[RMDB]
RNA sequence: GGGAACGACUCGAGUAGAGUCGAAAAGUCAUGCCUUCGGGCAUGACAGGUACCGAGAGGUACCAUAUACAGUUUAGCACAUCCAGACUAGACUGUAAGAACGUUUAUUUACAAGUAGGUCCUCUUGUAAGUAGACGAGCUAGGACCGAGGAUGUGACUUGGCAAGCAUAUUCGUAUGCUUGCCAAGAAAAGAAACAACAACAACAAC
Reactivity to 2A3 in 0.01 (KOAc 150mM, MgCl2 10mM, bicine 150mM(pH8.5), 24C), signal-to-noise 1, nucleotides 027 to 156: g000u000c000a000u000g020c000c000u000u100c300g060g010g000c000a000u000g010a000c000a000g030g000u000a000c000c010g020a010g000a010g050g000u010a000c000c000a000u000a000u020a110c060a000g020u010u020u060a020g000c000a000c000a020u000c000c000a000g030a020c000u000a040g010a130c010u030g130u170a130a060g070a110a010c000g000u000u000u000a030u010u000u020a000c000a010a010g000u030a030g210g280u110c020c030u050c000u000u010g010u020a010a000g000u020a010g040a000c000g010a000g030c030u040a000g010g060a100c000c080g070a100g010g020a000u000g040u000g020a010